[RMDB]
RNA sequence: GGGAACGACUCGAGUAGAGUCGAAAAUCGCGGUCAUCUUCUACAACUCCGAAGACGGAUCGGUCAUCGCGGUGACUCUGAACAACUUCUCGGCCCACGCCGAUGCGGUCGAUCUGUUCUAUCAGAUCGCGUACCUGCUGGACCCCGAGUCCACCGGCAUCCAAUAAGCUUUCGAGCUUAUUGGAUGAAAAGAAACAACAACAACAAC
Reactivity to DMS in 0.01 (KOAc 150mM, MgCl2 10mM, bicine 150mM(pH8.5), 24C), signal-to-noise 2, nucleotides 027 to 156: u010c020g010c040g060g030u000c010a070u000c030u000u010c020u010a110c100a090a140c110u000c200c120g000a110a070g000a050c040g020g030a050u010c020g040g010u000c030a130u000c020g030c020g040g000u000g010a180c010u020c020u010g010a050a110c100a080a150c130u000u000c000u000c000g030g000c000c010c000a050c060g050c000c050g020a030u000g030c040g020g020u010c010g000a000u000c010u010g000u000u020c160u000a140u000c020a080g010a000u000c010g010c040g040u000a040c020c000u000g020c000u000g010g000a060c010c000c080c040g010a090g010u010c010c030a030c000c010g000g010
Reactivity to 2A3 in 0.01 (KOAc 150mM, MgCl2 10mM, bicine 150mM(pH8.5), 24C), signal-to-noise 6, nucleotides 027 to 156: u090c010g000c000g010g000u000c010a040u010c030u120u010c020u130a180c070a300a130c140u040c090c070g020a030a010g010a030c100g030g010a010u020c020g000g040u070c040a080u100c030g020c020g060g020u010g010a030c010u010c030u080g040a090a020c040a070a070c130u130u070c050u040c030g020g010c010c030c010a040c110g030c020c030g030a040u030g030c050g020g070u120c010g010a010u000c000u010g080u200u070c060u150a150u190c010a010g000a010u000c000g000c010g020u020a010c000c020u070g010c030u020g020g010a030c020c000c020c070g010a040g000u010c050c010a020c040c000g020g000
An RNA of 207 nucleotides, treated with DMS and 2A3 and read out base by base. As a SHAPE reagent, 2A3 marks flexible, mostly unpaired nucleotides at the ribose 2'-OH. For DMS the reverse transcriptase was MarathonRT. It was measured as part of the RMDB library OK3TST.